[RMDB]
RNA sequence: GGGAACGACUCGAGUAGAGUCGAAAAUAAUCCAGCUGCUGUGGAUAGCAAGUGCCUGACUAGUAUUGAAGAAGUUUGCGAUGAUUACGCAAAGGACAAUACUGUUUUGCAGGCUUUACAGAGUGAAUGCGAAUUGGAGGUUCGCCUCCAAUUCGCAAAAAGAAACAACAACAACAAC
Reactivity to DMS in 0.01 (KOAc 150mM, MgCl2 10mM, bicine 150mM(pH8.5), 24C), signal-to-noise 1, nucleotides 027 to 126: u020a130a140u000c000c050a160g030c050u000g010c000u000g000u000g010g000a070u000a090g000c040a070a080g010u000g000c040c060u000g000a040c040u030a010g020u000a010u000u000g010a270a110g000a110a280g020u000u000u000g020c010g000a070u000g010a180u020u020a150c010g000c000a000a040a070g000g070a230c030a010a000u000a010c000u000g000u000u000u000u000g040c030a090g000g000c010u010u000u020a070c050a030g000a070g000u000g030a130a100
The record gives the reactivity of an RNA of 177 nucleotides to DMS. For DMS the reverse transcriptase was MarathonRT.